[RMDB]
RNA sequence: GGGAACGACUCGAGUAGAGUCGAAAACCCAGUGAUUCGUCACUGGGAAAAAGAUAUGGAAUGGCUAGGGUGCCUUAGCGAAGAACUCGGAAACGAGGGAGCUAAGGACCCACCCAAACCAUUCCUAAGUCAAAAAAGCACUAGUUCGCUAGUGCAAUCUAUUGCACACGUUCGCGUGUGCAAUAGAAAAAGAAACAACAACAACAAC
Reactivity to DMS in 0.01 (KOAc 150mM, MgCl2 10mM, bicine 150mM(pH8.5), 24C), signal-to-noise 1, nucleotides 027 to 156: c010c000c010a010g040u000g040a080u010u000c300g030u000c010a000c030u000g000g000g000a030a040a040a120a160g000a150u000a270u000g010g010a110a000u000g020g000c020u010a300g070g060g030u070g040c000c000u000u020a000g000c050g010a160a250g000a100a300c000u000c000g040g000a050a250a130c060g000a020g010g000g020a260g000c000u000a020a060g010g010a090c020c190c050a000c000c000c000a040a090a070c000c020a040u000u000c010c000u000a040a040g000u000c050a000a040a020a140a160a260g000c000a010c000u000a000g000u000u000c300g000c000u000a050g030u000g040c000a020a060
Reactivity to 2A3 in 0.01 (KOAc 150mM, MgCl2 10mM, bicine 150mM(pH8.5), 24C), signal-to-noise 2, nucleotides 027 to 156: c010c000c000a010g010u010g000a030u040u110c230g030u010c150a000c000u000g000g000g120a130a030a000a000a030g030a020u060a040u080g000g010a000a000u010g010g000c010u030a020g000g000g020u060g000c000c000u000u000a000g000c000g140a300a020g000a080a040c000u000c010g020g040a080a080a050c010g000a000g000g000g020a000g030c000u000a000a010g000g000a010c000c030c000a000c010c000c000a040a050a010c000c000a000u000u000c000c000u020a060a010g040u040c040a030a020a020a070a060a010g020c030a010c010u000a000g050u110u100c240g010c180u000a000g010u010g000c000a000a040
Chemical mapping of a 207-nucleotide RNA with DMS and 2A3. The DMS profile rests on 1,533 reads. 2A3 adducts were read by reverse transcription with SuperScript II with manganese.